[RMDB]
RNA sequence: GGGAACGACUCGAGUAGAGUCGAAAAACAGCCGUUGGUGUCCAGAAAGACGGCCUUAUUCACCGGCUCGAUCCAGCCAAUGACAGCGUACUUGGCCUUCUCGAGAAUUCCGAUCACAAAUCGGUUGGCCUCGUCCGCCUCGGCCACAUUCCAGGAACCUGAAAAGCAUUUUCGAAUGCUUUUCAGGAAAAGAAACAACAACAACAAC
Reactivity to DMS in 0.01 (KOAc 150mM, MgCl2 10mM, bicine 150mM(pH8.5), 24C), signal-to-noise 1, nucleotides 027 to 156: a030c020a120g020c030c010g050u000u000g000g030u000g010u010c080c060a150g010a100a060a150g030a040c040g030g000c030c020u000u010a080u000u000c050a080c110c000g020g000c020u000c010g010a260u000c080c080a300g010c040c010a040a100u000g040a150c100a130g030c080g020u000a080c030u000u000g000g010c000c030u000u000c020u010c030g000a080g000a200a140u010u030c000c020g010a130u000c100a140c170a040a160a110u000c040g030g000u000u000g010g010c010c040u000c080g000u000c000c030g050c030c030u010c050g000g090c000c030a060c040a280u010u000c030c010a280g030g040a060a190
Reactivity to 2A3 in 0.01 (KOAc 150mM, MgCl2 10mM, bicine 150mM(pH8.5), 24C), signal-to-noise 3, nucleotides 027 to 156: a020c020a020g000c010c020g030u040u040g030g050u060g040u070c020c020a050g120a080a160a020g010a030c040g020g010c000c000u110u170a160u070u070c030a040c070c050g020g030c050u060c060g050a050u000c040c030a030g010c010c030a050a100u130g080a080c050a040g030c020g020u010a030c030u010u010g010g000c000c020u070u010c230u110c040g040a050g030a070a100u230u090c030c050g060a100u150c090a070c080a140a100a080u010c000g010g000u020u030g060g000c000c010u000c010g000u010c040c010g010c020c020u040c010g020g030c020c000a050c010a090u050u080c040c020a040g130g090a040a050
The data come from the RNA Mapping Database (RMDB), library OK3TST.
The record gives the reactivity of an RNA of 207 nucleotides to DMS and 2A3.
The reactions ran in a buffer of 150 mM KOAc, 10 mM MgCl2 and 150 mM bicine (pH 8.5), at 24 C.
Values cover nucleotides 27 to 156.